[RMDB]
RNA sequence: GGGAACGACUCGAGUAGAGUCGAAAACUAGAAAAACUACUACUUAAAAACUAAAGACUAAUAUCUGAAAUAUCAACAUGUAGUUAGUAGGCAGAACCUUGAAGAUCUCCUUAACUGAUCCAUUAUAAAAUCCCUACACCUGUCUUCUAAGGAGACAUAAUGAUAUACGAUUCGUCGUAUAUCAUUAAAAAGAAACAACAACAACAAC
Reactivity to 2A3 in 0.01 (KOAc 150mM, MgCl2 10mM, bicine 150mM(pH8.5), 24C), signal-to-noise 3, nucleotides 027 to 156: c030u070a070g100a170a230a180a040a010c000u130a020c000u010a030c130u070u180a280a100a090a080a040c050u140a140a080a040g020a020c030u060a090a120u080a160u220c070u080g090a080a090a080u210a050u120c040a030a090c030a110u140g010u050a000g020u090u000a010g000u030a000g020g000c030a020g020a060a040c030c030u050u100g020a030a020g050a120u050c010u020c010c010u060u050a030a060c030u040g020a040u010c020c000a040u120u070a100u230a150a020a050a040u030c010c010c000u030a030c040a040c080c040u040g020u050c000u100u010c020u120a050a060g060g000a000g010a000c010a020
Reactivity to DMS in 0.01 (KOAc 150mM, MgCl2 10mM, bicine 150mM(pH8.5), 24C), signal-to-noise 1, nucleotides 027 to 156: c050u000a140g000a070a060a120a080a060c020u000a040c000u000a120c020u020u020a010a070a140a100a130c050u000a120a080a140g020a080c060u000a020a070u000a130u000c050u000g010a140a130a080u000a110u010c010a040a140c100a090u000g040u000a080g000u000u000a020g020u000a010g000g050c040a110g010a110a170c020c030u010u000g020a060a090g040a090u000c000u000c000c020u010u000a030a160c030u000g000a040u000c050c030a060u000u000a090u010a060a010a090a130u010c030c000c010u000a080c060a060c020c010u000g020u000c010u010u000c010u000a040a020g000g000a070g030a050c060a150